Source information:
Chemical mapping of a 177-nucleotide RNA with 2A3 and DMS. Values cover nucleotides 27 to 126.
RNA sequence: GGGAACGACUCGAGUAGAGUCGAAAAAUUGACUUGAUAGCAAACUGGUUAGAAUUGCUCUUGGAGUGAAAAGAAAGGACUGCAUGUCUGCAAUAAACCUUUUGUAAGCUGUCUCUCUUGAUACUCGCCCGAUGAAGAUAUUCGUAUCUUCAUCGGGAAAAGAAACAACAACAACAAC
Reactivity to 2A3 in 0.01 (KOAc 150mM, MgCl2 10mM, bicine 150mM(pH8.5), 24C), signal-to-noise 1, nucleotides 027 to 126: a010u010u040g000a030c000u020u050g010a020u040a060g010c030a030a000a030c020u020g000g060u040u000a070g140a220a060u020u010g000c000u000c000u010u040g000g060a010g000u070g110a200a110a080a070g120a070a050a020g150g060a040c010u060g050c110a010u020g010u100c100u050g030c000a000a010u000a070a020a010c000c000u020u010u020u100g060u050a060a050g000c010u000g000u000c000u000c000u010c020u020u060g080a060u050a180c020u050c070g050
Reactivity to DMS in 0.01 (KOAc 150mM, MgCl2 10mM, bicine 150mM(pH8.5), 24C), signal-to-noise 2, nucleotides 027 to 126: a040u000u000g000a030c030u010u020g010a100u000a050g010c030a090a100a070c040u010g000g040u000u000a050g010a150a070u000u000g010c000u000c020u010u000g000g000a040g050u010g000a090a060a070a130g000a180a160a110g010g000a040c060u000g000c010a010u000g010u000c110u000g000c010a010a020u000a070a030a040c030c010u000u000u000u000g020u000a050a140g020c000u000g020u000c010u010c050u000c040u020u010g000a140u010a120c100u000c140g020
The 2A3 profile rests on 1,269 reads. DMS adducts were read by reverse transcription with MarathonRT. The DMS profile rests on 1,101 reads.